[RMDB]
RNA sequence: GGGAACGACUCGAGUAGAGUCGAAAAUAACGGUAAAGCAACAAUUUACAUUAUUGAAAAAGAAAAAUAAGAAUGUUAUGUCUAAUGAAGACUAUCAGCAACUUAUGUCACAAUUAGGUCUAACUUCGGAAUGAACGACUUUCGAGUCGUUCAUUCCAAAAGAAACAACAACAACAAC
Reactivity to 2A3 in 0.01 (KOAc 150mM, MgCl2 10mM, bicine 150mM(pH8.5), 24C), signal-to-noise 2, nucleotides 027 to 126: u160a020a000c140g040g010u010a000a010a000g160c090a000a040c000a090a070u000u060u030a050c050a050u010u090a060u300u200g070a080a060a000a080a000g170a140a100a070a110a110u270a160a020g000a110a000u210g000u000u020a010u080g000u000c000u000a020a020u020g070a030a000g000a010c010u020a090u120c060a060g190c000a000a210c050u140u080a090u300g000u000c020a000c020a030a060u000u000a000g050g000u000c000u050a000a000c000u010u070c030

Chemical mapping of a 177-nucleotide RNA with 2A3.
Source: RMDB library OK1LIB, as collected in RNAgym.
The RNA was probed in 150 mM KOAc, 10 mM MgCl2 and 150 mM bicine (pH 8.5) at 24 C.